Chemical mapping of a 170-nucleotide RNA with 2A3 and DMS. The 2A3 profile rests on 2,182 reads. For DMS, 3,845 sequencing reads were counted. Reactivities are given for positions 27 through 129. Values are in units of 0.01, from 0 to 300, in steps of 10. For DMS the reverse transcriptase was MarathonRT.
RNA sequence: GGGAACGACUCGAGUAGAGUCGAAAACGAAGCGAGGAGGAAAGCAAAGAAAGCAACGGGGCUAGCCGGUGGGUGUUCCUCCCCCCGAGAGGGGAAGAGUGAGGCUUAUCCCGGGGAACCCGGCGAAAACCCAGCUCCUUCGGGAGCUGGAAAAGAAACAACAACAACAAC
Reactivity to 2A3 in 0.01 (KOAc 150mM, MgCl2 10mM, bicine 150mM(pH8.5), 24C), signal-to-noise 1, nucleotides 027 to 129: c010g050a000a000g050c000g000a000g020g010a000g010g010a050a050a020g010c030a080a030a040g090a020a030a000g020c000a030a050c120g070g000g000g000c080u000a080g060c030c000g000g000u000g020g000g000u050g030u020u000c000c010u080c010c010c010c020c000c000g090a100g050a060g130g030g000g000a000a030g040a000g090u180g000a000g000g000c000u130u150a060u020c030c000c000g030g000g040g000a000a020c050c010c000g000g020c060g040a080a050a000a010c000
Reactivity to DMS in 0.01 (KOAc 150mM, MgCl2 10mM, bicine 150mM(pH8.5), 24C), signal-to-noise 1, nucleotides 027 to 129: c000g060a060a010g000c000g060a070g000g090a060g000g000a080a060a060g020c300a080a090a130g050a140a070a060g000c030a110a120c040g000g040g080g000c130u000a130g030c070c020g000g010u000g000g040g000u080g000u050u030c020c000u050c000c080c010c010c000c040g000a110g070a050g000g040g050g000a060a010g020a150g050u060g010a000g000g060c000u040u040a160u080c040c000c010g000g010g000g140a200a110c040c070c010g080g000c000g080a090a030a150a080c170